[RMDB]
RNA sequence: GGGAACGACUCGAGUAGAGUCGAAAACCUAUCCAAAAUGAGAUCCCAUCUUGAACACUGUGCUAAUUUGAGAUUCUCAUGCCUCCUACUUGGAGAGAUCUGGACUAGAAGUCAGGGCAUCUGACUCAAUACAUUCGUCAGUUCGCUGACGAAUGAACAACGAGUAGAUCUUCGGAUCUACUCGUUGAAAAGAAACAACAACAACAAC
Reactivity to 2A3 in 0.01 (KOAc 150mM, MgCl2 10mM, bicine 150mM(pH8.5), 24C), signal-to-noise 6, nucleotides 027 to 156: c000c000u000a030u020c020c030a020a080a020a090u030g000a020g010a020u040c030c030c000a020u020c030u060u070g100a090a050c170a120c210u240g090u180g120c080u140a070a080u050u020u040g030a030g000a030u300u000c010u000c000a010u050g030c020c010u000c000c010u100a270c100u150u220g010g000a020g000a010g020a060u050c060u120g000g020a020c030u020a040g020a120a000g060u010c010a010g000g070g160c060a100u090c040u000g000a000c000u000c030a030a070u090a110c000a000u000u000c000g010u000c010a000g000u030u120c180g000c100u000g000a010c000g000a010a000u000g000a010a020
Reactivity to DMS in 0.01 (KOAc 150mM, MgCl2 10mM, bicine 150mM(pH8.5), 24C), signal-to-noise 2, nucleotides 027 to 156: c000c040u000a100u030c020c010a010a070a100a150u000g000a030g010a110u000c000c000c000a050u000c100u000u000g010a070a050c010a220c150u020g010u000g040c020u000a060a050u000u000u000g010a060g020a020u000u000c000u000c000a020u010g030c060c020u000c010c000u010a120c230u000u000g000g000a040g040a090g020a040u000c040u000g000g010a120c120u000a090g000a090a050g000u010c000a030g000g010g010c120a090u000c010u000g000a010c010u010c050a050a110u020a110c010a020u000u000c000g000u000c000a030g000u000u000c300g020c000u000g000a010c000g000a010a010u000g000a060a250